Structure probing data (2A3 and DMS) for a 177-nucleotide construct. The 2A3 profile rests on 1,567 reads. The reactions ran in a buffer of 150 mM KOAc, 10 mM MgCl2 and 150 mM bicine (pH 8.5), at 24 C. The DMS profile rests on 1,238 reads. It was measured as part of the RMDB library RFM100.
RNA sequence: GGGAACGACUCGAGUAGAGUCGAAAACCCCCACACGGCUAGACGCCUCGGCUGGUUCGCGACGCAGACCCCCGGCCGUGGAUGCUCGCUCGGGCUCGGGAUCCGCCCAGGUAGCGGCCGGACCCUGUCUUUGAUCGUGGUUCGCCACGAUCAAAGAAAAAGAAACAACAACAACAAC
Reactivity to 2A3 in 0.01 (KOAc 150mM, MgCl2 10mM, bicine 150mM(pH8.5), 24C), signal-to-noise 2, nucleotides 027 to 126: c020c000c000c000c010a040c020a030c030g020g000c000u010a040g030a150c040g020c030c030u020c030g000g040c000u020g020g010u070u070c070g030c050g080a040c050g000c090a060g040a180c030c000c000c010c020g010g000c020c000g010u050g000g040a070u140g020c040u050c040g060c010u060c040g010g000g000c050u050c060g000g040g020a060u030c010c020g040c000c010c000a030g040g040u060a030g010c010g000g000c000c000g010g000a010c000c010c020u060g030
Reactivity to DMS in 0.01 (KOAc 150mM, MgCl2 10mM, bicine 150mM(pH8.5), 24C), signal-to-noise 1, nucleotides 027 to 126: c080c030c000c040c010a080c000a070c100g000g030c040u000a080g000a110c070g030c040c010u000c130g060g000c040u000g020g010u010u010c000g000c110g040a060c040g000c030a130g050a210c050c010c000c020c030g000g020c070c040g060u000g010g000a110u090g000c000u010c010g040c080u010c090g030g000g060c040u000c110g010g000g010a240u010c010c110g060c020c000c020a090g000g010u000a060g000c010g000g000c040c000g000g010a120c000c010c000u050g020